The record gives the reactivity of an RNA of 177 nucleotides to 2A3 and DMS. For 2A3 the reverse transcriptase was SuperScript II with manganese. Conditions: 150 mM KOAc, 10 mM MgCl2 and 150 mM bicine (pH 8.5), 24 C. The DMS profile rests on 3,806 reads. DMS (dimethyl sulfate) methylates the pairing face of unpaired adenines and cytosines.
RNA sequence: GGGAACGACUCGAGUAGAGUCGAAAACGGUCGGCGAACUUCAGGCGGACGCGAUUGCACCCUGACUCGGCCGGCUGACACCUGGCGGGCACCUAGUCGAUCGUGCCCGCUGGCACGAUCCACUGACCCUCCCACUAUAGUUCGCUAUAGUGGGAGGAAAAGAAACAACAACAACAAC
Reactivity to 2A3 in 0.01 (KOAc 150mM, MgCl2 10mM, bicine 150mM(pH8.5), 24C), signal-to-noise 8, nucleotides 027 to 126: c010g000g010u010c000g010g000c020g010a050a030c050u120u040c030a010g060g000c100g130g100a250c080g040c030g240a280u080u300g000c010a050c010c000c000u010g030a040c030u030c030g190g050c040c000g000g000c010u000g010a000c010a020c020c000u000g020g000c000g000g000g010c000a020c000c040u110a090g120u170c090g060a160u100c050g010u000g010c000c000c010g000c010u010g000g000c020a010c120g030a050u020c030c020a070c060u060g080a110c000
Reactivity to DMS in 0.01 (KOAc 150mM, MgCl2 10mM, bicine 150mM(pH8.5), 24C), signal-to-noise 3, nucleotides 027 to 126: c000g000g000u000c020g000g020c010g000a020a020c230u020u030c030a030g040g020c090g000g020a130c160g010c070g000a170u040u020g010c050a110c080c000c000u010g010a080c300u000c030g030g000c000c000g000g000c030u000g010a070c180a090c220c000u060g010g000c000g000g010g000c000a020c040c100u020a150g000u040c140g000a060u020c230g010u000g010c030c000c110g000c070u010g000g000c110a080c150g010a110u000c000c010a030c050u020g010a300c210